[RMDB]
RNA sequence: GGGAACGACUCGAGUAGAGUCGAAAAAGCUGUGCCGGCUGUCUGUGGCACACCACGAGGGGUGACGUGUGGGUAUGCGCCGCCCGGCUGAGCACCGUAGGGAAGGCCCCGCGCGCUGACUAGGGGCGAAGGGCGGGCUGUUCGCAGCCCGCCCUUCAAAAGAAACAACAACAACAAC
Reactivity to DMS in 0.01 (KOAc 150mM, MgCl2 10mM, bicine 150mM(pH8.5), 24C), signal-to-noise 1, nucleotides 027 to 126: a110g010c070u000g000u010g030c010c010g010g000c010u000g020u000c080u000g000u000g000g000c060a050c040a100c030c010a030c040g010a190g010g000g010g020u010g030a120c080g000u020g020u000g000g020g030u020a090u010g020c070g000c010c030g010c020c170c010g000g020c020u000g000a200g010c060a050c020c080g000u000a090g010g000g020a080a120g020g000c010c010c000c020g000c140g000c090g040c130u000g010a100c080u000a170g020g000g050g000c110